[RMDB]
RNA sequence: GGGAACGACUCGAGUAGAGUCGAAAAGAAAGAGCCGGUGAGACUGAAGCUCGAACUGUGAUAAAUUCACUGUGAAAGAAGCCGACUAAAUGUACGCUCACUGUCGGUGAGUGAACCGGGAAAGAAACCCAACUUAAUAGUUCGCUAUUAAGUUGGGAAAAGAAACAACAACAACAAC
Reactivity to DMS in 0.01 (KOAc 150mM, MgCl2 10mM, bicine 150mM(pH8.5), 24C), signal-to-noise 7, nucleotides 027 to 126: g010a070a150a110g000a140g030c030c040g000g020u000g020a150g020a080c050u000g030a130a120g020c030u010c040g010a140a040c020u000g030u000g000a030u020a060a120a150u040u000c000a000c010u000g000u010g000a190a110a080g010a100a110g020c000c020g000a090c050u010a040a090a090u030g010u020a110c100g010c020u000c060a030c070u000g000u040c140g000g010u000g010a010g010u000g000a110a040c020c030g000g010g000a090a040a080g000a100a090a090
Reactivity to 2A3 in 0.01 (KOAc 150mM, MgCl2 10mM, bicine 150mM(pH8.5), 24C), signal-to-noise 7, nucleotides 027 to 126: g060a030a090a010g060a000g110c020c010g000g000u040g010a110g020a050c060u100g070a090a010g020c000u010c020g010a020a000c010u030g010u010g040a030u050a190a180a100u140u030c000a000c010u030g020u020g080a060a090a070g080a070a010g010c010c010g010a020c050u100a070a090a070u170g030u090a070c040g010c040u040c030a040c020u040g110u180c050g040g010u030g000a010g000u010g000a000a010c000c000g000g020g060a040a110a030g090a010a040a000

About this RNA: This 177-nucleotide RNA was probed chemically with DMS and 2A3. Source: RMDB library OK1LIB, as collected in RNAgym. The DMS profile rests on 15,729 reads.